The record gives the reactivity of an RNA of 177 nucleotides to DMS and 2A3. DMS adducts were read by reverse transcription with MarathonRT. Source: RMDB libraries RFM100 and RFMREP, as collected in RNAgym. DMS (dimethyl sulfate) methylates the pairing face of unpaired adenines and cytosines. For 2A3 the reverse transcriptase was SuperScript II with manganese.
[RMDB]
RNA sequence: GGGAACGACUCGAGUAGAGUCGAAAAGUGUCUUUUCUUAUAAGGACACUGAUUCUAUCAGAUGAGGGUCCCUAGCUGGGUUUAAGAAGUGCAAUAUUUAAACAAAAGCCAUGAACUUUGUAAGCCCCAGUAAAUCCUAUUUCGAUAGGAUUUACUGAAAAGAAACAACAACAACAAC
Reactivity to DMS in 0.01 (KOAc 150mM, MgCl2 10mM, bicine 150mM(pH8.5), 24C), signal-to-noise 7, nucleotides 027 to 126: g020u000g010u000c000u010u000u000u000c270u040u030a080u040a030a010g000g010a010c000a000c000u000g000a050u000u010c010u000a020u000c100a260g010a070u010g000a300g000g000g000u000c000c000c010u040a100g020c100u010g010g010g010u010u000u000a070a110g000a030a030g000u000g010c050a070a090u010a120u010u010u020a080a100a110c130a080a080a060a100g010c150c160a090u010g000a090a050c020u000u000u010g000u000a050a060g000c010c000c010
Reactivity to 2A3 in 0.01 (KOAc 150mM, MgCl2 10mM, bicine 150mM(pH8.5), 24C), signal-to-noise 9, nucleotides 027 to 126: g000u000g000u010c000u020u060u060u020c090u110u300a210u100a240a020g010g000a000c000a000c010u010g000a000u010u000c010u010a060u120c050a050g050a110u070g020a050g050g120g040u010c000c000c000u000a020g010c040u030g030g010g030u030u070u030a050a030g020a020a010g010u020g060c030a050a030u050a150u210u190u160a220a180a050c090a040a130a020a000g040c010c020a040u080g030a010a030c000u000u000u010g000u010a020a010g000c010c000c000